[RMDB]
An RNA of 177 nucleotides, treated with 2A3 and DMS and read out base by base.
RNA sequence: GGGAACGACUCGAGUAGAGUCGAAAAGAUAUGGAGUGAGUGCGGACAUGCAGUGUCGGAAACGACACGCAACAGCCGUUCACUCCUAAGUCAAACGCUGCGUAACCGUUCGCGGUUACGCAGCGAAUCCAACACCUUAGUUCGCUAAGGUGUUGGAAAAAGAAACAACAACAACAAC
Reactivity to 2A3 in 0.01 (KOAc 150mM, MgCl2 10mM, bicine 150mM(pH8.5), 24C), signal-to-noise 1, nucleotides 027 to 126: g000a010u040a010u050g000g000a010g000u010g010a060g060u300g130c050g000g040a250c070a100u020g000c060a090g000u000g000u000c000g030g000a000a030a010c000g010a010c000a010c000g000c000a050a100c020a050g190c000c020g000u030u000c000a000c010u040c000c000u030a000a010g000u030c020a090a060a040c010g000c010u000g020c000g050u000a000a000c030c010g000u080u110c300g030c030g060g040u000u020a010c000g030c000a000g000c000g000a000a000
Reactivity to DMS in 0.01 (KOAc 150mM, MgCl2 10mM, bicine 150mM(pH8.5), 24C), signal-to-noise 1, nucleotides 027 to 126: g030a020u000a300u030g020g000a020g000u020g000a040g010u000g090c000g010g000a160c100a120u020g010c000a140g050u000g010u000c000g020g000a070a030a140c000g000a010c000a000c000g000c000a020a050c250a100g000c000c000g000u000u000c000a020c000u000c000c000u000a020a070g000u000c010a070a150a230c020g000c000u010g000c030g000u010a010a000c010c000g030u000u020c190g000c010g000g000u000u000a010c000g010c020a000g020c000g010a010a020
Record summary
For DMS the reverse transcriptase was MarathonRT. The 2A3 profile rests on 2,402 reads.